An RNA of 207 nucleotides, treated with DMS and 2A3 and read out base by base. The 2A3 profile rests on 1,851 reads. For DMS, 3,803 sequencing reads were counted. 2A3 adducts were read by reverse transcription with SuperScript II with manganese. The RNA was probed in 150 mM KOAc, 10 mM MgCl2 and 150 mM bicine (pH 8.5) at 24 C.
RNA sequence: GGGAACGACUCGAGUAGAGUCGAAAAGCAGUGCAAGUUUGGCUGGAGAAGGUGUUUAGAAAUAUUCAUUAAUUGGCAGUUAUCACUUCAACUAUAGGUUCUGGUUUUCUUGAUUUCUUUCAUUUUGAAAUGGGAGACUUGGGCCCGGGACAGCUAACGCAUAAUUAUGAUUCGUCAUAAUUAUGCGAAAAGAAACAACAACAACAAC
Reactivity to DMS in 0.01 (KOAc 150mM, MgCl2 10mM, bicine 150mM(pH8.5), 24C), signal-to-noise 2, nucleotides 027 to 156: g020c040a100g020u020g030c030a060a060g000u010u000u010g030g000c030u010g020g000a070g040a070a070g020g020u000g020u000u010u010a100g010a120a100a110u000a080u010u010c020a080u000u000a050a160u000u000g010g020c030a070g020u000u010a060u000c040a070c030u000u010c030a080a090c070u000a130u010a060g060g020u000u000c020u000g000g030u000u000u000u000c010u000u000g010a120u010u010u010c010u010u010u010c060a070u000u000u010u000g020a030a040a050u010g000g010g010a040g020a030c080u000u000g010g010g010c050c000c020g020g100g020a080c090a030g000c040u000a040a210
Reactivity to 2A3 in 0.01 (KOAc 150mM, MgCl2 10mM, bicine 150mM(pH8.5), 24C), signal-to-noise 4, nucleotides 027 to 156: g000c020a020g030u060g060c020a080a030g030u060u080u080g060g000c040u040g040g020a030g010a070a030g050g020u070g020u030u100u060a050g040a030a060a010u120a060u080u110c030a040u060u170a190a090u110u060g040g010c030a030g020u050u090a100u150c010a020c080u120u070c070a120a070c040u070a050u140a240g010g030u030u040c020u010g000g040u050u040u070u050c010u020u100g080a080u070u070u040c000u030u060u030c030a110u060u110u120u180g090a090a090a000u020g000g000g010a010g000a000c000u020u030g000g010g020c000c030c050g000g000g020a010c030a020g070c050u080a070a030